This 177-nucleotide RNA was probed chemically with DMS.
DMS (dimethyl sulfate) methylates the pairing face of unpaired adenines and cytosines.
Reactivities are given for positions 27 through 126.
The reactions ran in a buffer of 150 mM KOAc, 10 mM MgCl2 and 150 mM bicine (pH 8.5), at 24 C.
[RMDB]
RNA sequence: GGGAACGACUCGAGUAGAGUCGAAAAGCCGGUUCGGUAGUUGUGAGUAUGCACAAGAGGGUGUUUGUAUUACCACAAAUGGCUCGUGGGCCAUUUUUAAUGACCACCAUCUUAAUAGACCUGGUGUCUAAUGCGUACAGUUCGCUGUACGCAUUAGAAAAGAAACAACAACAACAAC
Reactivity to DMS in 0.01 (KOAc 150mM, MgCl2 10mM, bicine 150mM(pH8.5), 24C), signal-to-noise 1, nucleotides 027 to 126: g000c030c010g020g000u010u010c080g040g020u000a110g010u000u000g000u010g000a160g010u000a030u010g000c070a020c100a060a040g000a060g010g020g030u010g010u000u020u000g030u000a050u010u000a090c210c150a100c250a010a020a030u010g010g010c020u000c090g010u020g010g020g010c000c000a010u000u000u020u010u000a040a060u010g000a040c070c000a030c040c010a060u000c000u000u000a080a160u010a080g010a030c020c020u000g000g010u010g020u010